[RMDB]
RNA sequence: GGGAACGACUCGAGUAGAGUCGAAAAGCGAAAUGCUCAAUUGUGCUCACUUCUCAUUCCAUGGAAGAGUGUGAAGCACUGUGUACACGUAUCGGAAUUCUAAGGAAAGGAGAAAUGAUUGCAUUGAGGUAAUUAUGCUCUUCGGAGCAUAAUUACCAAAAGAAACAACAACAACAAC
Reactivity to DMS in 0.01 (KOAc 150mM, MgCl2 10mM, bicine 150mM(pH8.5), 24C), signal-to-noise 2, nucleotides 027 to 126: g010c050g010a090a050a150u020g020c000u000c030a060a050u000u000g030u000g010c110u000c010a010c000u000u000c000u010c010a110u000u010c020c020a160u010g040g010a030a070g010a060g010u000g020u000g010a110a110g060c050a020c040u000g020u000g020u000a050c090a080c110g010u000a140u000c100g010g010a140a110u000u010c010u000a080a120g010g010a020a010a130g000g000a060g000a030a040a000u010g000a070u000u000g020c020a030u000u000g010a110
Reactivity to 2A3 in 0.01 (KOAc 150mM, MgCl2 10mM, bicine 150mM(pH8.5), 24C), signal-to-noise 2, nucleotides 027 to 126: g090c070g040a120a090a090u230g000c010u020c040a010a140u120u070g020u000g010c010u000c030a000c020u070u060c000u000c020a190u020u000c020c020a040u140g090g020a050a010g030a020g030u040g000u030g100a100a020g060c000a030c050u040g040u010g000u050a010c050a000c110g060u100a080u120c060g020g010a050a160u080u030c010u060a100a060g030g020a070a020a050g060g020a030g010a020a050a010u070g050a050u100u010g000c030a040u060u100g030a040